[RMDB]
RNA sequence: GGGAACGACUCGAGUAGAGUCGAAAAACUAAUCCAAAGCUAGUAUAGGAGAACAGGUUUUUAACUAUUUUUAGGCAGAUAAAAAAUAGUAUUUGACAGUCUAACACUAACUGAACAAUAAGUGUUAAAAAGUCGUCUCUGUUCGCAGAGACGACAACUGAGCUUAAACGUUCGCGUUUAAGCUCAGAAAAGAAACAACAACAACAAC
Reactivity to 2A3 in 0.01 (KOAc 150mM, MgCl2 10mM, bicine 150mM(pH8.5), 24C), signal-to-noise 2, nucleotides 027 to 156: a000c040u070a060a040u050c020c010a090a060a070g020c060u090a030g030u140a150u080a110g020g030a030g020a110a040c090a130g040g040u030u000u010u030u070a010a020c000u020a010u010u000u000u000u030a020g050g000c040a030g050a190u180a080a080a010a000a000a010u000a030g000u030a130u080u070u120g050a030c000a000g000u000c000u000a000a000c000a000c000u000a020a000c000u010g080a050a010c010a010a030u020a020a000g000u000g010u000u020a030a070a010a000a010g000u000c000g000u010c000u000c010u000g050u070u050c120g010c020a000g000a000g000a000c000g000a000c000a000a000
Notes
Conditions: 150 mM KOAc, 10 mM MgCl2 and 150 mM bicine (pH 8.5), 24 C. Structure probing data (2A3) for a 207-nucleotide construct. The data come from the RNA Mapping Database (RMDB), library M2RFPK.